The record gives the reactivity of an RNA of 177 nucleotides to 2A3 and DMS. It was measured as part of the RMDB library OK1LIB. The 2A3 profile rests on 13,223 reads. The RNA was probed in 150 mM KOAc, 10 mM MgCl2 and 150 mM bicine (pH 8.5) at 24 C. For DMS the reverse transcriptase was MarathonRT.
[RMDB]
RNA sequence: GGGAACGACUCGAGUAGAGUCGAAAAGCUCCGGAAACUUGGUACACACGCACGCCACCGACAACCCGAGCUCCAGAAAGCGCACGAGCGACAGGGUGUUGCAAUACGACCCCAGCAGGGCGUCGAAAUGGUUCUAUACUUUCGAGUAUAGAACCAUAAAAGAAACAACAACAACAAC
Reactivity to 2A3 in 0.01 (KOAc 150mM, MgCl2 10mM, bicine 150mM(pH8.5), 24C), signal-to-noise 7, nucleotides 027 to 126: g010c010u010c050c000g050g060a090a090a060c050u050u110g040g060u150a040c050a000c000a000c070g010c010a020c020g020c010c010a040c010c020g070a040c020a040a040c000c010c000g020a020g010c010u000c010c000a060g120a110a100a020g040c050g010c030a030c060g030a030g050c020g050a030c040a080g040g010g030u030g020u030u060g010c030a050a050u100a140c020g030a070c000c000c000c010a040g090c060a080g030g020g010c060g020u010c010g020a100a040
Reactivity to DMS in 0.01 (KOAc 150mM, MgCl2 10mM, bicine 150mM(pH8.5), 24C), signal-to-noise 9, nucleotides 027 to 126: g020c050u000c010c050g010g010a070a080a070c070u020u030g010g020u020a060c070a080c060a070c070g000c040a030c030g000c020c030a060c030c070g010a080c120a080a070c040c020c040g000a150g000c010u010c010c080a110g010a060a060a070g000c070g020c050a060c080g000a060g010c040g010a080c120a090g000g010g010u010g010u010u000g010c100a060a100u030a120c040g000a050c020c010c010c010a170g030c150a120g010g000g010c130g010u000c010g010a050a080